Notes: Chemical mapping of a 207-nucleotide RNA with 2A3 and DMS. For DMS the reverse transcriptase was MarathonRT. Reactivities are given for positions 27 through 156. The data come from the RNA Mapping Database (RMDB), library M2RFPK.
RNA sequence: GGGAACGACUCGAGUAGAGUCGAAAACAGAGCUAAUGAGCCACAUACCUACCCAAGGUGAAAGCUCCUUGUCUCGCAAUGUGUAACUCAUGAUUCUCAUGACCCCUGGUUGGAGAGAUCCGGACUAUAGACUAGAGGGUGUUCGCACCCUCUAGAAUCUGUAAAUAACCUUCGGGUUAUUUACAGAAAAAGAAACAACAACAACAAC
Reactivity to 2A3 in 0.01 (KOAc 150mM, MgCl2 10mM, bicine 150mM(pH8.5), 24C), signal-to-noise 1, nucleotides 027 to 156: c030a020g030a010g010c020u080a040a010u040g010a000g040c050c010a030c020a040u150a040c000c030u030a070c030c010c030a030a010g020g000u040g050a120a060a060g070c050u050c050c020u050u050g010u060c020u080c170g020c070a080a080u030g000u020g030u070a040a020c020u010c010a020u020g030a110u300u040c070u010c050a040u090g040a100c000c000c000c000u050g000g060u050u040g000g030a040g000a010g000a060u020c040c030g020g010a000c030u060a060u130a220g100a040c000u000a000g000a010g000g040g000u020g020u020u020c010g050c010a000c000c010c020u000c000u010a000g000a000a000
Reactivity to DMS in 0.01 (KOAc 150mM, MgCl2 10mM, bicine 150mM(pH8.5), 24C), signal-to-noise 1, nucleotides 027 to 156: c050a080g000a070g000c060u000a090a070u020g010a040g030c010c030a040c030a110u020a050c050c110u000a070c060c070c020a030a040g000g040u000g000a140a130a180g010c090u000c020c050u010u010g000u010c040u000c040g000c040a100a090u000g060u010g010u000a060a030c050u000c020a060u000g000a140u010u000c020u000c020a150u000g010a190c010c010c020c040u000g010g020u000u000g030g020a150g010a190g000a080u010c080c020g000g010a130c030u000a110u000a080g020a170c010u000a000g000a030g020g010g020u010g030u000u000c300g020c010a030c030c000c010u010c000u020a000g020a060a040